[RMDB]
RNA sequence: GGGAACGACUCGAGUAGAGUCGAAAAAUCCGUGGAUGUCGGGUGCGCACCGCUCCUCCUCCGGCUGUUCUCCUUCACAGCUAUGACCCAUGCGCCGCACAGGCAGUGUCCCGCUUCGUGUGCAAAAAAAACCGCCAGUACUUCGGUACUGGCGGAACCACUUUCUUCUGUUCGCAGAAGAAAGUGGAAAAGAAACAACAACAACAAC
Reactivity to 2A3 in 0.01 (KOAc 150mM, MgCl2 10mM, bicine 150mM(pH8.5), 24C), signal-to-noise 1, nucleotides 027 to 156: a000u070c000c070g020u050g000g000a010u000g030u280c020g020g010g040u020g010c010g020c000a030c010c000g000c000u000c000c000u040c030c030u120c040c090g020g020c000u010g030u150u090c100u130c050c030u240u210c100a040c010a020g000c010u060a080u220g120a220c000c000c070a060u130g020c040g030c050c000g040c010a020c000a010g010g010c010a030g020u020g030u140c070c000c020g020c010u040u020c070g100u000g000u010g000c020a040a000a090a000a000a000a000a040c000c000g020c000c010a000g000u000a000c000u020u150c200g080g010u010a000c000u000g000g000c000g000g000a000a000
Notes:
The record gives the reactivity of an RNA of 207 nucleotides to 2A3. The 2A3 profile rests on 810 reads. 2A3 adducts were read by reverse transcription with SuperScript II with manganese. The reactions ran in a buffer of 150 mM KOAc, 10 mM MgCl2 and 150 mM bicine (pH 8.5), at 24 C. High 2A3 reactivity points to a flexible backbone, as in loops and unpaired stretches.